[RMDB]
This 207-nucleotide RNA was probed chemically with 2A3 and DMS.
Values are in units of 0.01, from 0 to 300, in steps of 10.
DMS adducts were read by reverse transcription with MarathonRT.
In probing experiments dimethyl sulfate is read out at A N1 and C N3, which are open when not base-paired.
RNA sequence: GGGAACGACUCGAGUAGAGUCGAAAACUCGCUCAAACAUACAGAGGUGUUGUGCGAGAUGAAUCUCUCUGCAUUAGAAUGGUCGAAGAAUCAGCGGCAAUUCGAGACCUAAUUAGAAGCCGCAUUAACAGCUUUGGAACACGCCUUGCUGACGUGACCCUAAUCAGUAGUUCGCUACUGAUUAGGGAAAAGAAACAACAACAACAAC
Reactivity to 2A3 in 0.01 (KOAc 150mM, MgCl2 10mM, bicine 150mM(pH8.5), 24C), signal-to-noise 5, nucleotides 027 to 156: c000u000c000g000c000u020c020a120a080a050c010a040u180a050c070a070g100a050g040g100u030g000u010u000g010u010g000c000g000a000g010a040u080g080a090a130u020c020u000c000u000c020u100g050c050a120u060u160a130g130a210a110u150g040g000u010c010g010a130a020g010a010a060u030c050a070g010c000g000g000c000a010a030u010u020c000g000a000g000a040c000c000u060a060a040u080u090a030g080a170a010g020c010c010g010c020a010u040u110a040a050c010a000g040c050u120u200u300g040g030a070a040c030a010c050g020c000c000u030u060g000c000u020g010a040c020g030u030g050a070
Reactivity to DMS in 0.01 (KOAc 150mM, MgCl2 10mM, bicine 150mM(pH8.5), 24C), signal-to-noise 3, nucleotides 027 to 156: c000u000c020g000c010u010c030a120a050a120c040a070u020a300c040a230g000a120g000g040u000g020u010u000g040u000g000c050g000a090g000a100u000g000a110a120u010c070u000c010u020c060u000g000c030a200u000u000a140g030a120a150u010g030g020u000c000g000a190a180g000a110a070u000c040a090g010c030g010g010c010a080a090u000u010c030g000a300g010a090c010c010u000a060a110u010u000a140g020a050a070g020c000c010g000c090a160u000u000a080a080c030a030g000c030u010u000u000g060g000a150a150c030a040c000g000c010c060u010u000g040c110u000g000a050c020g020u000g010a290